[RMDB]
RNA sequence: GGGAACGACUCGAGUAGAGUCGAAAACUUGCCAACCAAUUCACUGAAUUUGUUGGCACUCAAUCCGUUGACAUGUUAGCUGUCAAAACAGGCGUUGCUAUUGAACAGCUGCUUUAUGCGAUCCAACCCACGGGGACGUUCGCGUCCCCGAAAAGAAACAACAACAACAAC
Reactivity to 2A3 in 0.01 (KOAc 150mM, MgCl2 10mM, bicine 150mM(pH8.5), 24C), signal-to-noise 5, nucleotides 027 to 129: c050u020u020g000c000c000a000a000c000c030a000a000u020u030c170a210c300u300g000a000a000u000u000u010g000u000u010g010g010c010a050c000u000c030a140a180u040c080c050g020u020u070g110a060c030a020u070g010u080u160a010g010c000u010g000u000c000a030a030a090a080c080a040g120g000c100g180u170u280g000c020u070a070u040u080g010a030a020c000a020g000c040u020g000c000u050u060u040a120u110g010c020g000a040u060c020c040a070a020c010c000c000a030
Reactivity to DMS in 0.01 (KOAc 150mM, MgCl2 10mM, bicine 150mM(pH8.5), 24C), signal-to-noise 3, nucleotides 027 to 129: c160u010u020g000c000c000a000a060c000c070a090a000u000u000c030a150c180u070g030a020a070u010u000u000g020u050u000g000g000c000a020c140u060c110a010a160u040c070c030g000u040u030g000a000c210a060u030g000u000u000a110g000c050u030g030u030c070a050a040a080a140c160a080g000g000c300g040u000u060g030c020u040a130u050u010g000a080a060c060a060g010c000u010g010c090u000u000u000a020u000g030c100g020a040u020c060c050a010a020c010c020c030a070
Structure probing data (2A3 and DMS) for a 170-nucleotide construct. The reactions ran in a buffer of 150 mM KOAc, 10 mM MgCl2 and 150 mM bicine (pH 8.5), at 24 C. DMS adducts were read by reverse transcription with MarathonRT. Values cover nucleotides 27 to 129.